Description: This 177-nucleotide RNA was probed chemically with 2A3 and DMS. The reactions ran in a buffer of 150 mM KOAc, 10 mM MgCl2 and 150 mM bicine (pH 8.5), at 24 C. For 2A3, 1,353 sequencing reads were counted.
[RMDB]
RNA sequence: GGGAACGACUCGAGUAGAGUCGAAAAGAGAUCGAAACUCACGAGCAAGAAUGCGAAGUGCCUGCCGGUAGUCUGGCGAUGGUCGGCGAUUCUCUACCUGCAUUCGGUAUUGUUGCCGCCGUUAUGGCAAUGCCAUUGGCUUCGGCCAAUGGCAUUGAAAAGAAACAACAACAACAAC
Reactivity to 2A3 in 0.01 (KOAc 150mM, MgCl2 10mM, bicine 150mM(pH8.5), 24C), signal-to-noise 2, nucleotides 027 to 126: g010a000g020a050u110c010g010a180a040a070c050u050c020a030c020g000a020g050c020a070a090g120a250a110u160g010c000g120a120a020g000u030g060c010c020u020g040c030c000g060g030u060a080g170u080c100u070g070g000c040g070a100u080g010g060u090c030g020g040c030g000a010u300u020c020u000c020u040a060c000c000u050g070c030a120u170u130c020g040g000u040a080u050u160g150u080u060g000c020c010g000c000c000g060u100u080a070u170g020g000
Reactivity to DMS in 0.01 (KOAc 150mM, MgCl2 10mM, bicine 150mM(pH8.5), 24C), signal-to-noise 4, nucleotides 027 to 126: g000a060g000a030u010c050g010a150a100a100c070u010c030a100c060g010a210g020c100a090a080g000a090a050u000g010c020g000a100a100g000u010g020c090c050u000g010c010c030g010g000u010a060g000u010c040u010g040g020c080g010a060u000g010g000u000c070g020g000c020g000a060u010u000c040u010c030u000a080c030c010u000g000c070a080u010u000c050g010g000u000a080u000u000g010u010u010g010c020c020g000c020c010g010u000u000a060u010g010g020